[RMDB]
RNA sequence: GGGAACGACUCGAGUAGAGUCGAAAACGGUCUUUGCUCUGUCCCGCAGGCACGAGCACGAGACGCCAAGAUGGGAGGCUUGGCUAGAAGGGGGAAGGUGGUCGCCUCCUGUAAAGGAGACAGAACGUAAAUUUAGUCGCUUCGGCGACUAAAUUUAAAAAGAAACAACAACAACAAC
Reactivity to DMS in 0.01 (KOAc 150mM, MgCl2 10mM, bicine 150mM(pH8.5), 24C), signal-to-noise 2, nucleotides 027 to 126: c150g020g020u000c000u000u010u000g000c010u020c000u000g000u030c030c070c170g100c090a130g000g000c090a020c100g000a000g000c060a040c090g010a040g000a060c110g000c010c030a030a020g000a040u020g000g000g000a100g010g020c020u000u000g000g000c020u020a110g000a160a090g020g030g010g010g000a120a130g030g010u010g000g040u000c040g000c020c010u010c010c000u010g000u030a070a070a020g030g000a080g000a070c060a050g010a100a130c200g000
Reactivity to 2A3 in 0.01 (KOAc 150mM, MgCl2 10mM, bicine 150mM(pH8.5), 24C), signal-to-noise 2, nucleotides 027 to 126: c030g040g010u040c000u030u000u010g000c000u000c010u040g120u140c080c080c090g010c090a200g010g000c020a030c140g020a020g010c020a030c040g000a010g020a020c030g000c020c000a060a000g030a060u150g000g000g010a040g030g020c000u050u090g000g000c020u090a090g040a100a050g050g010g000g000g030a000a050g000g000u000g000g020u030c010g000c000c000u010c000c000u070g040u090a160a090a040g060g020a030g000a020c020a050g080a210a020c050g030